[RMDB]
RNA sequence: GGGAACGACUCGAGUAGAGUCGAAAAUCGCGCUAGUCUCAUCCGGCUGGGUCGUGGCCGAGCCGGAAACAGAAGAGCCGUAUGACCUCAUCGGGCGCGAUCCGGUGAACGGCGAGUGGUAUACGUUUCAAGUCAAGACGAUUCGCAAGCGGUACGAUAUGACGACAAACUUCGGUUUGUCGUCAUAAAAAGAAACAACAACAACAAC
Reactivity to DMS in 0.01 (KOAc 150mM, MgCl2 10mM, bicine 150mM(pH8.5), 24C), signal-to-noise 1, nucleotides 027 to 156: u010c040g000c050g020c080u010a070g010u000c000u040c020a200u010c010c020g000g010c020u030g020g030g030u000c080g040u010g080g010c040c030g000a080g010c020c000g060g030a000a030a090c020a160g030a040a020g010a110g000c040c040g000u010a070u010g010a160c110c000u020c050a060u010c000g040g000g000c010g000c050g000a080u000c020c010g010g000u000g000a040a060c090g030g000c020g000a160g080u000g000g020u000a120u000a020c040g000u020u000u000c030a050a090g000u020c100a100a070g000a080c090g020a240u010u000c050g000c060a070a120g000c030g040g020u010a010c090g010a220
Reactivity to 2A3 in 0.01 (KOAc 150mM, MgCl2 10mM, bicine 150mM(pH8.5), 24C), signal-to-noise 1, nucleotides 027 to 156: u010c000g010c000g000c080u080a030g070u080c030u000c030a000u000c000c000g080g000c000u070g100g010g000u140c110g150u250g130g060c020c010g080a000g000c000c000g010g000a000a030a020c060a040g120a090a000g020a030g020c010c000g070u120a080u150g140a100c010c010u000c000a030u010c000g050g020g020c010g020c000g040a060u030c000c000g020g020u020g030a060a040c010g030g000c000g010a040g000u110g020g050u050a090u040a140c030g010u020u090u150c020a010a010g010u020c010a030a040g160a040c080g030a020u070u040c020g050c060a000a010g090c030g000g030u050a060c040g030a020
Source: RMDB library OK3TST, as collected in RNAgym. This 207-nucleotide RNA was probed chemically with DMS and 2A3. The DMS profile rests on 2,324 reads. 2A3 adducts were read by reverse transcription with SuperScript II with manganese. The RNA was probed in 150 mM KOAc, 10 mM MgCl2 and 150 mM bicine (pH 8.5) at 24 C.